[RMDB]
RNA sequence: GGGAACGACUCGAGUAGAGUCGAAAAUUUUGGGUUUCGUUACGCUGCAGAAGCCACUGUACUUGAAAGUGUCGCAGCGAUGGCACAACAACACAUUCGUCAUUCGUAAGCGAUUCACAAUAUGUCAGACGUAGCUGACUUUCGAGUCAGCUACGUCAAAAGAAACAACAACAACAAC
Reactivity to DMS in 0.01 (KOAc 150mM, MgCl2 10mM, bicine 150mM(pH8.5), 24C), signal-to-noise 1, nucleotides 027 to 126: u000u000u060u000g000g000g060u000u000u000c000g000u000u000a050c000g050c000u000g050c020a060g120a240a300g000c150c000a040c000u020g040u000a070c220u030u130g000a270a000a000g000u000g000u000c000g040c030a170g000c090g020a000u000g000g050c000a020c300a080a020c240a120a020c290a090c190a020u000u010c090g040u000c000a000u040u000c260g050u000a030a060g000c000g000a000u000u000c000a060c120a040a010u040a050u000g000u000c070a100
Reactivity to 2A3 in 0.01 (KOAc 150mM, MgCl2 10mM, bicine 150mM(pH8.5), 24C), signal-to-noise 2, nucleotides 027 to 126: u160u180u000u070g080g000g000u000u000u000c020g040u100u000a070c020g000c000u030g020c100a050g050a130a000g060c060c000a000c000u040g000u200a040c000u000u300g090a110a060a070g030u080g020u070c000g000c000a030g000c040g000a000u000g000g000c030a110c010a150a000c020a020a060c110a070c060a230u120u120c000g000u000c040a050u180u140c170g000u070a070a070g000c000g000a000u110u160c000a000c040a010a240u020a090u050g210u060c000a000